The record gives the reactivity of an RNA of 177 nucleotides to 2A3 and DMS. Reactivities are rounded to 0.1 and cut off at 0 and 3. DMS adducts were read by reverse transcription with MarathonRT.
RNA sequence: GGGAACGACUCGAGUAGAGUCGAAAAGGUGAGCAAGCUCUUUGAGACCCUAAACUCCGAGUACCCGUGGGUCGUGACCAAGGACCUCAUCGAGUUCUUUAAGGAGGACGCAGAGAGGGUCGCGGAGCAGGUAGCUUUUGUUCGCAAAAGCUACCUGAAAAGAAACAACAACAACAAC
Reactivity to 2A3 in 0.01 (KOAc 150mM, MgCl2 10mM, bicine 150mM(pH8.5), 24C), signal-to-noise 2, nucleotides 027 to 126: g080g010u090g030a060g080c050a100a030g020c040u000c000u110u070u160g040a050g020a040c000c000c000u070a140a150a040c000u020c070c040g000a010g010u020a040c010c010c000g000u070g000g000g000u000c030g040u050g040a050c030c040a050a040g130g010a020c010c020u060c020a100u090c030g020a030g010u000u020c030u070u110u040a150a080g100g010a020g010g020a030c050g050c160a020g030a020g000a020g060g000g030u020c020g000c030g040g010a020g040
Reactivity to DMS in 0.01 (KOAc 150mM, MgCl2 10mM, bicine 150mM(pH8.5), 24C), signal-to-noise 4, nucleotides 027 to 126: g010g030u010g010a160g020c180a150a120g000c030u000c010u000u000u010g010a300g000a030c020c000c000u000a040a110a160c000u000c030c020g010a070g010u010a070c030c020c020g040u010g000g000g020u010c020g020u010g000a150c110c060a110a150g010g010a030c010c000u000c110a130u010c050g010a120g000u000u000c000u010u000u010a120a100g010g000a020g010g010a080c120g020c140a210g020a110g000a130g000g010g000u000c000g010c070g020g010a080g010